Conditions: 150 mM KOAc, 10 mM MgCl2 and 150 mM bicine (pH 8.5), 24 C. The record gives the reactivity of an RNA of 177 nucleotides to DMS and 2A3. 2A3 adducts were read by reverse transcription with SuperScript II with manganese. High 2A3 reactivity points to a flexible backbone, as in loops and unpaired stretches. Reactivities are given for positions 27 through 126. The data come from the RNA Mapping Database (RMDB), library TTRDES.

RNA sequence: GGGAACGACUCGAGUAGAGUCGAAAAGAUAUGGAACAGGAGUACAGCGAAGAACUUAUUCGGAAACGAAUAAGGGAGCUGACUCUGUUCCUAAGUCAAAACCAGUGUAGGUUCGCCUACACUGGAAUCAAAGUUAUCCGUUCGCGGAUAACUUUGAAAAAGAAACAACAACAACAAC
Reactivity to DMS in 0.01 (KOAc 150mM, MgCl2 10mM, bicine 150mM(pH8.5), 24C), signal-to-noise 1, nucleotides 027 to 126: g020a000u010a300u000g010g010a020a030c000a070g020g000a070g030u000a120c040a020g010c000g000a070a230g000a120a260c010u000u010a000u000u000c010g040g010a050a100a180c000g000a020a010u000a000a010g040g000g010a060g010c030u000g010a110c010u000c030u000g000u000u010c000c000u010a000a060g000u000c010a110a060a080a220c000c010a010g020u000g010u030a000g020g010u000u020c240g000c000c000u000a000c000a020c000u000g000g000a040a060
Reactivity to 2A3 in 0.01 (KOAc 150mM, MgCl2 10mM, bicine 150mM(pH8.5), 24C), signal-to-noise 2, nucleotides 027 to 126: g000a010u070a040u100g000g000a020a000c020a030g210g150a120g200u300a300c050a020g040c030g260a300a040g010a040a000c000u030u000a000u030u000c000g000g030a030a020a000c000g000a000a010u000a030a000g020g000g000a000g000c020u000g010a030c010u010c000u040g010u020u020c010c000u000a050a010g070u020c000a040a060a110a150c000c020a000g000u000g010u010a040g000g090u070u070c300g100c070c010u030a000c000a000c000u020g000g000a000a020